Structure probing data (2A3 and DMS) for a 207-nucleotide construct. Conditions: 150 mM KOAc, 10 mM MgCl2 and 150 mM bicine (pH 8.5), 24 C. 2A3 adducts were read by reverse transcription with SuperScript II with manganese.
RNA sequence: GGGAACGACUCGAGUAGAGUCGAAAAGAGUACAUAUGCCCAGCCUUACUGUCGCGGCUGGAUGCUUCGUGCAAAUGCUAUGUACGCCUACGUAUAUGUGCGUAGAUGCCUAUAUUUUCUCUCCUGAGAAAAUAUAGAUGCAUACAAAGUGAAUGCACUGAGUAUUUAAUUUCGAUUAAAUACUCAGAAAAGAAACAACAACAACAAC
Reactivity to 2A3 in 0.01 (KOAc 150mM, MgCl2 10mM, bicine 150mM(pH8.5), 24C), signal-to-noise 8, nucleotides 027 to 156: g090a020g020u020a010c010a010u040a040u290g010c010c000c000a000g000c000c010u210u210a180c120u280g140u300c140g030c070g080g000c000u030g030g010a010u100g000c010u070u140c150g100u150g020c010a060a070a140u180g000c010u000a000u010g000u000a000c010g020c000c010u020a020c010g040u040a070u020a040u270g150u050g060c010g010u020a030g020a110u040g000c000c000u000a000u000a000u000u000u000u000c010u000c020u070c060c210u170g000a000g000a000a000a000a000u000a000u000a000g000a010u110g000c000a010u030a070c030a020a130a040g060u090g080a160a070u080g020c020a010
Reactivity to DMS in 0.01 (KOAc 150mM, MgCl2 10mM, bicine 150mM(pH8.5), 24C), signal-to-noise 4, nucleotides 027 to 156: g030a120g020u000a050c040a060u000a060u000g010c020c010c020a070g000c030c020u000u000a150c080u010g020u000c050g030c300g000g010c010u000g000g010a090u000g010c030u000u010c130g000u000g000c010a060a080a150u000g010c010u000a050u010g010u000a010c020g000c030c010u000a000c020g030u000a120u010a080u000g030u000g030c020g020u000a030g020a080u000g010c030c000u000a010u000a000u010u000u000u000c000u000c000u010c240c270u000g020a030g010a040a010a020a000u000a010u000a000g020a090u000g010c010a030u000a080c040a060a090a100g020u000g000a070a250u000g010c030a280